[RMDB]
The data come from the RNA Mapping Database (RMDB), libraries RFM100 and RFMREP. The record gives the reactivity of an RNA of 177 nucleotides to 2A3. Conditions: 150 mM KOAc, 10 mM MgCl2 and 150 mM bicine (pH 8.5), 24 C. Values cover nucleotides 27 to 126.
RNA sequence: GGGAACGACUCGAGUAGAGUCGAAAACGUCUAUACUCAGUGAAUCACUGAGUUCAUAGAACCUCUUCUACACGUCGACAAGAUUAUUUCUUGUGUUUGCCAGUCAUCGUAUGGUGCCUGGCAUUUUUCCGCUGACAUAAUUCGUUAUGUCAGCGGAAAAAGAAACAACAACAACAAC
Reactivity to 2A3 in 0.01 (KOAc 150mM, MgCl2 10mM, bicine 150mM(pH8.5), 24C), signal-to-noise 3, nucleotides 027 to 126: c070g070u010c000u020a050u020a050c000u000c000a000g000u010g140a300a190u300c050a000c000u010g000a010g000u020u050c020a000u000a010g000a030a010c000c000u030c030u050u000c020u150a070c040a000c060g270u080c060g130a000c030a000a020g000a020u110u100a190u160u300u030c050u000u050g030u000g080u100u160u030g000c000c000a050g020u020c000a000u000c030g180u270a210u300g000g000u010g000c000c010u000g000g000c000a000u000u000u000u000